This 177-nucleotide RNA was probed chemically with DMS and 2A3.
High 2A3 reactivity points to a flexible backbone, as in loops and unpaired stretches.
The 2A3 profile rests on 3,922 reads.
[RMDB]
RNA sequence: GGGAACGACUCGAGUAGAGUCGAAAACGCCCGAGAUGCGGUCGCGUUGGUUCACCGACACGUCCCGGAUUCUCCGGAGGCGUUGCCGCUGUUGUUCGGUCACAUCGGUGAGGGCAACCUGCACCUGUAACACACAAAUGUUCGCAUUUGUGUGUUAAAAAGAAACAACAACAACAAC
Reactivity to DMS in 0.01 (KOAc 150mM, MgCl2 10mM, bicine 150mM(pH8.5), 24C), signal-to-noise 3, nucleotides 027 to 126: c250g000c020c010c010g000a050g000a060u000g020c010g000g000u000c050g030c060g020u030u010g010g050u030u010c090a050c020c010g000a030c190a030c000g000u000c040c000c000g010g000a180u040u020c130u010c010c040g020g020a090g000g000c010g020u000u020g020c020c010g010c090u000g000u000u020g010u000u000c000g000g010u000c110a090c120a160u020c040g000g000u000g000a060g010g010g010c090a100a070c000c000u040g020c040a050c020c000u020g000
Reactivity to 2A3 in 0.01 (KOAc 150mM, MgCl2 10mM, bicine 150mM(pH8.5), 24C), signal-to-noise 5, nucleotides 027 to 126: c080g040c000c000c000g050a050g010a030u140g040c040g000g030u030c090g020c080g090u030u070g050g190u120u060c050a070c060c010g000a010c010a000c000g020u050c000c010c020g040g000a140u300u070c120u070c090c040g040g020a110g030g000c000g000u010u050g010c000c010g040c070u080g030u060u040g030u060u030c000g010g030u040c080a020c010a170u030c010g020g000u030g010a020g010g050g020c020a030a030c000c010u080g020c020a020c020c020u050g030